The record gives the reactivity of an RNA of 177 nucleotides to 2A3. The RNA was probed in 150 mM KOAc, 10 mM MgCl2 and 150 mM bicine (pH 8.5) at 24 C. 2A3 adducts were read by reverse transcription with SuperScript II with manganese. The 2A3 profile rests on 402 reads.
RNA sequence: GGGAACGACUCGAGUAGAGUCGAAAACAUGAGCGGAGAAAUAUAUCCUUUUGUUUCUCCUCUGAGACAAGGGGAAAUCCUUCAUAUACCUGUAGAAAUAGGACUACCAACUCAAUGACAAAAAUCCCAUGCCCUCCACCUUCGGGUGGAGGGCAUGAAAAGAAACAACAACAACAAC
Reactivity to 2A3 in 0.01 (KOAc 150mM, MgCl2 10mM, bicine 150mM(pH8.5), 24C), signal-to-noise 2, nucleotides 027 to 126: c060a000u000g010a000g110c260g100g020a110g110a010a220a000u240a020u040a180u150c000c000u030u070u110u000g030u000u140u000c000u000c000c220u020c120u130g020a000g050a000c040a040a080g040g000g000g020a010a000a050u010c000c000u090u110c070a010u080a000u050a300c000c100u120g100u130a000g180a000a140a090u220a010g000g000a160c000u110a140c030c000a080a140c000u080c030a010a140u140g080a110c130a020a060a070a000a000u020c000c000